Background: Source: RMDB library M2PK50, as collected in RNAgym. Structure probing data (DMS and 2A3) for a 177-nucleotide construct. The reactions ran in a buffer of 150 mM KOAc, 10 mM MgCl2 and 150 mM bicine (pH 8.5), at 24 C. 2A3 adducts were read by reverse transcription with SuperScript II with manganese. Values cover nucleotides 27 to 126.

RNA sequence: GGGAACGACUCGAGUAGAGUCGAAAACCCUCACUCUUCGGAGUGAGGGAAAUCUGAUUCCCAAUAGCUCGGUAUCCGGGCUAAGACGGAUAGGCGUUGCCAAAAGAUCUGGCUUCGGCCAGAUCAAGUUAAUUCCAGAGUUCGCUCUGGAAUUAACAAAAGAAACAACAACAACAAC
Reactivity to DMS in 0.01 (KOAc 150mM, MgCl2 10mM, bicine 150mM(pH8.5), 24C), signal-to-noise 3, nucleotides 027 to 126: c000c000c000u010c000a000c000u020c000u000u020c130g010g010a020g010u000g000a020g000g000g000a000a010a040u020c020u000g000a240u010u000c010c000c000a160a300u000a020g000c000u000c000g020g020u000a180u010c050c000g000g000g010c010u000a000a010g000a170c200g000g010a010u000a090g000g020c050g010u000u010g000c000c030a110a080a180a100g000a010u000c000u000g000g000c000u000u010c160g030g000c000c000a000g000a000u000c000a050a060
Reactivity to 2A3 in 0.01 (KOAc 150mM, MgCl2 10mM, bicine 150mM(pH8.5), 24C), signal-to-noise 1, nucleotides 027 to 126: c010c020c010u010c000a000c010u030c000u060u040c180g140g000a000g000u000g000a000g000g000g000a060a050a000u030c010u030g030a110u080u150c000c010c000a010a040u000a000g000c000u000c030g100g050u300a270u250c070c010g010g020g000c010u010a000a000g010a000c010g010g000a030u030a040g000g000c070g130u110u120g120c020c010a080a090a050a030g000a000u000c000u010g000g000c000u030u040c270g020g040c000c000a000g000a000u010c000a010a010